RNA sequence: GGGAACGACUCGAGUAGAGUCGAAAAGAAUGUAUGUAAACCGUGUGGCACUCAAUGGCACCGCAAAGAAAGAAAUGCGGCAACAGGUAAAAGUGUGUAAAGCCAUAUCAUAAGCAUACGGAAGAAAGAUAAUCCGGCUAUUCGUAGCCGGAUUAUCAAAAGAAACAACAACAACAAC
Reactivity to 2A3 in 0.01 (KOAc 150mM, MgCl2 10mM, bicine 150mM(pH8.5), 24C), signal-to-noise 2, nucleotides 027 to 126: g020a060a000u270g000u040a000u000g060u060a010a010a000c000c010g020u000g000u000g110g040c030a040c010u060c050a010a090u050g000g010c060a000c040c000g010c000a240a150a020g140a060a170a000g090a000a000a030u030g000c000g000g020c120a010a000c010a040g070g000u080a000a000a020a200g190u070g000u020g010u160a050a050a050g010c060c030a060u050a020u210c000a010u000a230a000g020c010a000u010a010c000g000g040a090a020g070a050a090a000
Reactivity to DMS in 0.01 (KOAc 150mM, MgCl2 10mM, bicine 150mM(pH8.5), 24C), signal-to-noise 2, nucleotides 027 to 126: g010a120a030u040g010u020a080u050g000u000a040a150a100c070c020g030u000g000u020g000g000c040a090c050u000c160a120a040u000g000g060c040a140c010c000g010c000a040a060a060g030a210a200a070g040a090a270a160u000g000c000g000g040c200a040a110c020a000g000g000u020a040a080a040a130g030u000g000u000g000u000a070a030a250g000c000c000a020u000a050u030c060a070u000a020a110g060c010a000u000a000c020g020g000a080a140g010a100a110a090
The record gives the reactivity of an RNA of 177 nucleotides to 2A3 and DMS.
DMS (dimethyl sulfate) methylates the pairing face of unpaired adenines and cytosines.
Reactivities are given for positions 27 through 126.
The RNA was probed in 150 mM KOAc, 10 mM MgCl2 and 150 mM bicine (pH 8.5) at 24 C.
The 2A3 profile rests on 859 reads.
For DMS the reverse transcriptase was MarathonRT.
2A3 adducts were read by reverse transcription with SuperScript II with manganese.
It was measured as part of the RMDB library OK1LIB.